[RMDB]
RNA sequence: GGGAACGACUCGAGUAGAGUCGAAAAUGUGUCCUAGGGAAUUGGAAGGUCAUCCUUCACAGGAUCGUGUGGAAGUCCUGCUCGGGGCGGAAGCAUUAAAACCAUUCGACCUAGUCAAUGCGUGGCGUUACCUCCAGGUUCUUCGGAACCUGGAGAAACAGAAUCUAUGAUUCGUCAUAGAUUCUGUAAAAGAAACAACAACAACAAC
Reactivity to 2A3 in 0.01 (KOAc 150mM, MgCl2 10mM, bicine 150mM(pH8.5), 24C), signal-to-noise 4, nucleotides 027 to 156: u110g040u010g010u030c010c000u010a050g030g000g030a060a120u180u150g040g020a050a040g020g040u130c040a070u070c010c000u090u120c100a040c010a040g000g030a040u030c040g000u010g000u010g040g010a020a000g020u030c010c010u040g130c160u120c150g030g000g000g000c010g010g020a010a010g000c000a000u000u210a050a060a020a100c020c010a020u030u030c030g030a060c010c010u010a020g060u100c090a050a080u090g040c050g060u040g050g000c050g040u060u090a070c010c000u000c000c000a000g000g010u000u000c000u030u110c210g070g000a000a000c000c000u010g000g000a000g010a010a000
Reactivity to DMS in 0.01 (KOAc 150mM, MgCl2 10mM, bicine 150mM(pH8.5), 24C), signal-to-noise 3, nucleotides 027 to 156: u010g040u000g020u000c030c040u000a060g020g010g010a110a110u010u000g030g020a080a050g020g020u000c070a120u000c030c010u000u010c150a110c110a100g020g030a040u010c130g020u010g010u000g000g010a300a230g010u000c020c000u010g040c110u010c110g010g000g020g000c020g000g010a290a220g000c030a080u020u000a020a070a100a160c030c030a120u000u000c050g000a070c000c020u010a060g020u000c060a050a080u000g010c050g000u000g000g010c050g030u000u000a080c140c010u000c000c010a010g000g010u000u000c000u000u000c300g050g000a000a000c010c000u020g000g010a000g010a000a030